[RMDB]
RNA sequence: GGGAACGACUCGAGUAGAGUCGAAAAGUUUGCUUAGCGGGUUGGGCUGUAGGGUACACUAUGCUGGCCUGCCCACUCCAAGUUGAGAGUUGGGCCAUGGGAUUUGGGCGAAGGCUCAGAUCUCCUGGUCGUAUGAUUGGUUCGCCAAUCAUACGACAAAAGAAACAACAACAACAAC
Reactivity to 2A3 in 0.01 (KOAc 150mM, MgCl2 10mM, bicine 150mM(pH8.5), 24C), signal-to-noise 2, nucleotides 027 to 126: g030u090u080u020g040c010u140u110a070g070c010g010g110g000u150u130g090g020g000c030u050g110u180a110g000g000g050u080a040c000a010c040u140a100u210g030c070u030g000g050c000c020u050g020c000c000c000a000c000u010c000c000a070a130g020u110u230g150a120g000a010g030u220u120g050g000g010c060c020a050u080g000g000g000a000u020u000u000g000g020g000c020g030a080a050g150g000c010u040c020a000g000a000u020c010u020c010c030u030g000
Reactivity to DMS in 0.01 (KOAc 150mM, MgCl2 10mM, bicine 150mM(pH8.5), 24C), signal-to-noise 2, nucleotides 027 to 126: g020u000u020u030g010c020u000u000a060g030c060g000g000g060u010u020g020g000g020c040u000g010u040a070g010g010g000u020a090c150a090c010u040a020u020g000c100u000g000g000c000c050u010g000c010c030c000a030c030u000c000c010a100a130g010u000u000g010a100g000a120g000u010u030g070g010g000c010c060a010u000g000g000g000a010u000u010u000g000g000g020c010g000a150a140g000g010c000u020c010a000g000a020u000c000u000c000c040u000g000